[RMDB]
RNA sequence: GGGAACGACUCGAGUAGAGUCGAAAAAUUCGGACCGGCUCAUCUCGACAAGAGGCGGCAGUCCUCAGUACUCUUACUCUUUUCUGUAAAGAGGAGACUGCUGGACCCGCCGCCCAAGUUCGAGCAUGAGCCAAUUCCGAACGAAGAGACGCGGGAGCAUUUCUAUAAAGUUCGCUUUAUAGAAAUGAAAAGAAACAACAACAACAAC
Reactivity to 2A3 in 0.01 (KOAc 150mM, MgCl2 10mM, bicine 150mM(pH8.5), 24C), signal-to-noise 5, nucleotides 027 to 156: a000u030u010c010g020g000a030c080c050g000g040c000u000c000a010u000c000u000c000g000a000c010a100a090g080a180g060g000c010g000g000c010a010g000u000c000c000u000c000a060g010u130a300c010u000c010u080u150a220c010u050c020u100u210u180u080c190u300g230u300a040a020a000g010a000g000g010a000g000a010c010u020g090c050u010g000g000a010c010c050c160g000c000c000g000c010c000c000a040a010g040u090u030c000g000a000g010c040a010u010g020a000g000c000c000a000a010u010u000c000c010g010a020a010c010g030a080a050g050a010g030a070c090g010c080g120g030g020a090g040
Reactivity to DMS in 0.01 (KOAc 150mM, MgCl2 10mM, bicine 150mM(pH8.5), 24C), signal-to-noise 1, nucleotides 027 to 156: a060u000u000c030g050g000a070c300c180g010g000c000u000c010a020u010c020u010c000g060a040c080a300a120g000a140g020g030c000g030g100c010a090g000u010c020c010u000c000a040g030u010a070c050u000c030u020u000a210c000u000c020u000u010u010u000c290u000g000u000a010a010a030g020a010g000g020a090g020a120c000u010g000c140u000g010g020a040c000c040c090g020c000c000g000c000c010c000a120a180g020u000u000c020g020a150g000c080a010u030g020a040g000c020c000a030a030u020u000c000c000g000a020a020c000g020a160a180g020a220g010a080c050g050c080g000g030g010a280g030